[RMDB]
RNA sequence: GGGAACGACUCGAGUAGAGUCGAAAAGAUAUGGAAGGAACUACGCUGAAACUAGCGUUGAAAUCGGAAACGAUGGAGCUAGUACGCAGCGCCUUCCUAAGUCAAAAGCCAAUCUUCGGAUUGGCAAUCUUAAAUUGAGGUUCGCCUCAAUUUAAGAAAAAGAAACAACAACAACAAC
Reactivity to 2A3 in 0.01 (KOAc 150mM, MgCl2 10mM, bicine 150mM(pH8.5), 24C), signal-to-noise 2, nucleotides 027 to 126: g010a020u060a040u120g010g000a000a020g020g010a080a070c130u150a060c300g000c000u000g000a020a030a010c000u000a000g000c010g140u160u040g000a030a020a010u010c000g010g020a050a040a040c000g000a010u020g000g010a010g000c000u000a000g010u020a020c230g000c010a000g000c010g000c000c000u000u000c000c000u000a120a000g040u000c020a020a070a080a090g000c000c000a010a000u000c000u050u090c300g110g000a000u010u000g010g020c000a000a000
Reactivity to DMS in 0.01 (KOAc 150mM, MgCl2 10mM, bicine 150mM(pH8.5), 24C), signal-to-noise 5, nucleotides 027 to 126: g000a030u010a300u000g000g020a030a010g000g000a110a050c150u020a280c030g010c000u000g010a050a040a020c000u000a000g010c010g010u000u000g010a060a110a020u000c000g000g000a120a070a180c010g000a010u000g000g000a130g000c010u000a000g010u000a020c300g010c010a000g000c010g000c000c000u000u000c000c000u000a010a080g000u010c030a060a070a120a140g000c000c000a010a010u000c000u000u010c190g020g000a010u000u000g000g000c000a010a010
This 177-nucleotide RNA was probed chemically with 2A3 and DMS.
2A3 adducts were read by reverse transcription with SuperScript II with manganese.
It was measured as part of the RMDB library TTRDEL.
High DMS reactivity at an A or C suggests that its Watson-Crick edge is free.
For DMS the reverse transcriptase was MarathonRT.
The RNA was probed in 150 mM KOAc, 10 mM MgCl2 and 150 mM bicine (pH 8.5) at 24 C.